[RMDB]
RNA sequence: GGGAACGACUCGAGUAGAGUCGAAAAAAUCAGCAGAGGAGUCUUUUACAUGCUUCUUGAUUGGUCACAAUGACUACUCUGUGCCAGUCAUCAGAAAAACAUAUUUGCCUUUUUGGCGACACAAGGGCUCAUUAGGUUAGUUCGCUAACCUAAUGAGAAAAGAAACAACAACAACAAC
Reactivity to 2A3 in 0.01 (KOAc 150mM, MgCl2 10mM, bicine 150mM(pH8.5), 24C), signal-to-noise 5, nucleotides 027 to 126: a000a010u140c030a010g010c000a000g010a000g020g020a010g020u000c010u050u250u110u160a090c050a070u050g030c000u160u090c000u120u080g020a030u020u010g030g030u200c060a010c020a030a050u130g020a010c020u030a040c000u030c010u010g010u010g000c000c000a010g070u030c010a030u070c030a030g200a060a110a030a010a020c030a030u160a140u100u120u110g000c000c010u070u120u070u130u260g030g000c020g030a010c020a000c010a080a070g060g020g000
Reactivity to DMS in 0.01 (KOAc 150mM, MgCl2 10mM, bicine 150mM(pH8.5), 24C), signal-to-noise 4, nucleotides 027 to 126: a110a040u010c110a070g000c040a040g000a050g010g000a030g010u000c010u010u000u000u010a100c230a060u000g020c020u000u010c140u000u000g000a060u000u010g010g000u010c050a030c070a030a130u000g010a040c050u000a040c040u000c010u000g010u000g020c030c010a060g010u000c010a050u010c150a090g000a040a030a060a040a050c110a090u020a100u010u000u010g010c020c020u000u000u000u000u000g010g020c080g010a060c130a040c130a050a050g000g000g010